RNA sequence: GGGAACGACUCGAGUAGAGUCGAAAAGAUAUGGAGCGUCCGUGUGCGAGACGUAGUGUCGGAAACGACACUACGUCGAUGAGCACGACGCUCCUAAGUCAAACCGUGUCAGUUCGCUGACACGGAAGUCGUACUCACGGUUCGCCGUGAGUACGACAAAAGAAACAACAACAACAAC
Reactivity to 2A3 in 0.01 (KOAc 150mM, MgCl2 10mM, bicine 150mM(pH8.5), 24C), signal-to-noise 1, nucleotides 027 to 126: g000a010u000a000u040g010g010a000g030c040g020u110c260c220g190u250g020u020g130c170g080a240g000a100c020g010u020a000g020u000g000u000c010g000g000a020a000a000c000g030a000c000a000c000u000a000c010g000u030c010g000a000u040g010a000g000c010a010c000g000a020c010g000c010u010c000c000u000a000a000g000u000c000a000a020a080c020c000g000u020g000u000c020a020g030u050u160c300g010c250u010g010a010c000a010c010g030g000a040a010
Reactivity to DMS in 0.01 (KOAc 150mM, MgCl2 10mM, bicine 150mM(pH8.5), 24C), signal-to-noise 1, nucleotides 027 to 126: g020a060u000a150u000g010g000a030g010c000g000u010c020c300g090u010g010u000g020c030g000a060g040a000c000g030u000a010g020u000g000u000c000g050g000a010a000a060c010g010a000c000a000c010u000a000c010g010u000c000g000a050u010g000a080g000c020a010c060g000a010c040g010c000u010c000c000u000a000a100g020u000c000a090a150a200c000c010g010u010g000u000c000a020g020u010u050c260g030c020u020g000a000c030a000c010g020g000a060a060